[RMDB]
RNA sequence: GGGAACGACUCGAGUAGAGUCGAAAAGCAAUAUGUUACAUAUAAACAGUUCAUAUUGCGCCUAAUCAACUGUUUAUAUGUAAGAUUAGGCACGACGGUGGACAUGCGAAAGCAUGUCCAUCGUCGAGCUCGUAGAAGGCUUCGGCCUUCUACGAGCAAAAGAAACAACAACAACAAC
Reactivity to DMS in 0.01 (KOAc 150mM, MgCl2 10mM, bicine 150mM(pH8.5), 24C), signal-to-noise 1, nucleotides 027 to 126: g010c010a090a120u030a000u000g000u000u000a020c020a010u000a030u000a040a020a010c020a000g000u000u030c140a030u000a260u020u000g000c060g050c090c030u020a140a070u000c240a010a000c000u000g000u000u000u000a050u000a000u000g000u000a000a000g000a030u000u000a100g010g000c010a220c040g000a010c000g090g010u020g000g010a010c000a000u080g010c000g040a120a100a090g040c000a030u000g000u020c010c000a000u010c020g000u000c000g000a020
Reactivity to 2A3 in 0.01 (KOAc 150mM, MgCl2 10mM, bicine 150mM(pH8.5), 24C), signal-to-noise 2, nucleotides 027 to 126: g030c020a010a110u050a040u180g160u080u030a020c010a000u040a010u010a040a070a000c010a020g020u010u030c030a030u080a060u160u190g030c040g050c020c000u040a030a030u050c030a000a000c000u010g010u050u050u030a040u030a010u010g000u010a010a010g000a010u040u060a030g110g040c030a010c030g000a000c000g000g000u000g000g010a000c000a000u000g010c000g070a170a010a010g000c000a000u000g000u000c000c010a000u000c000g000u000c000g000a000